[RMDB]
RNA sequence: GGGAACGACUCGAGUAGAGUCGAAAAGAUAUGGACGAUGAUCGCUUGGAUUUAUGGCCAAGUCGGAAACGACGACGCCAUUGUCAGCGAUCCAUCGUCCUAAGUCAAAGCCGUCUUCGGACGGCAAGCCGUUAUAUAUGUUCGCAUAUAUAACGGCAAAAGAAACAACAACAACAAC
Reactivity to 2A3 in 0.01 (KOAc 150mM, MgCl2 10mM, bicine 150mM(pH8.5), 24C), signal-to-noise 8, nucleotides 027 to 126: g040a010u070a040u170g000g000a010c000g010a000u020g000a000u000c010g010c070u090u210g160g030a110u300u300u120a020u060g010g000c010c020a040a020g000u000c000g010g010a050a070a030c020g000a010c010g000a020c030g000c000c000a000u000u010g010u000c010a000g000c000g000a000u000c010c000a000u000c000g000u000c000c000u000a020a010g000u010c030a060a030a030g000c000c000g010u000c010u030u070c240g180g000a000c020g000g000c000a000a010
Reactivity to DMS in 0.01 (KOAc 150mM, MgCl2 10mM, bicine 150mM(pH8.5), 24C), signal-to-noise 9, nucleotides 027 to 126: g010a050u010a300u010g010g010a010c010g020a000u000g000a040u000c000g010c000u010u020g010g030a010u000u010u000a000u000g000g020c010c010a040a300g010u000c000g010g000a090a080a170c000g010a010c000g000a300c300g000c000c000a000u000u010g000u000c000a030g000c000g000a010u000c100c050a000u000c000g010u000c000c000u000a000a050g000u000c040a100a120a130g010c000c000g010u000c000u000u010c140g010g000a020c000g000g000c010a010a030
An RNA of 177 nucleotides, treated with 2A3 and DMS and read out base by base. Source: RMDB library TTRDEL, as collected in RNAgym. Reactivities are given for positions 27 through 126. DMS adducts were read by reverse transcription with MarathonRT. For DMS, 15,888 sequencing reads were counted. 2A3 adducts were read by reverse transcription with SuperScript II with manganese. For 2A3, 47,998 sequencing reads were counted.